This 177-nucleotide RNA was probed chemically with 2A3 and DMS. The reactions ran in a buffer of 150 mM KOAc, 10 mM MgCl2 and 150 mM bicine (pH 8.5), at 24 C. Source: RMDB library OK2TST, as collected in RNAgym.
RNA sequence: GGGAACGACUCGAGUAGAGUCGAAAAAUGAGAACUCCACCCGCACCCGGGUGUCGUUCGAGGUAGCGGGUAAGUGGAUGAGCGCCGACGUGAUCAACGUCAGCGCUGCCGGAUCUUCGGUAGGCAAGUGCUUAUUAUGAUUCGUCAUAAUAAGCACAAAAGAAACAACAACAACAAC
Reactivity to 2A3 in 0.01 (KOAc 150mM, MgCl2 10mM, bicine 150mM(pH8.5), 24C), signal-to-noise 8, nucleotides 027 to 126: a000u160g020a060g040a090a040c030u000c020c030a010c010c000c010g000c010a030c000c030c010g030g020g060u140g190u130c080g080u090u080c010g010a080g030g010u050a070g010c020g010g030g010u050a100a030g080u070g060g050a090u100g100a020g000c010g010c010c020g000a000c000g000u010g040a180u240c100a100a000c000g000u000c010a000g000c010g000c000u000g000c010c000g060g050a160u060c040u120u110c090g030g000u030a050g010g060c060a100a050
Reactivity to DMS in 0.01 (KOAc 150mM, MgCl2 10mM, bicine 150mM(pH8.5), 24C), signal-to-noise 9, nucleotides 027 to 126: a100u010g010a160g000a090a100c080u000c040c050a060c010c010c010g020c050a080c060c060c050g010g010g010u010g010u010c150g010u000u000c010g000a130g010g000u000a080g030c010g010g000g010u000a030a050g020u000g010g010a070u000g010a040g010c000g020c000c010g010a010c000g010u000g000a180u020c300a110a020c000g010u000c000a030g010c000g010c000u000g010c020c020g000g000a110u010c100u000u000c030g010g010u000a090g010g010c130a090a110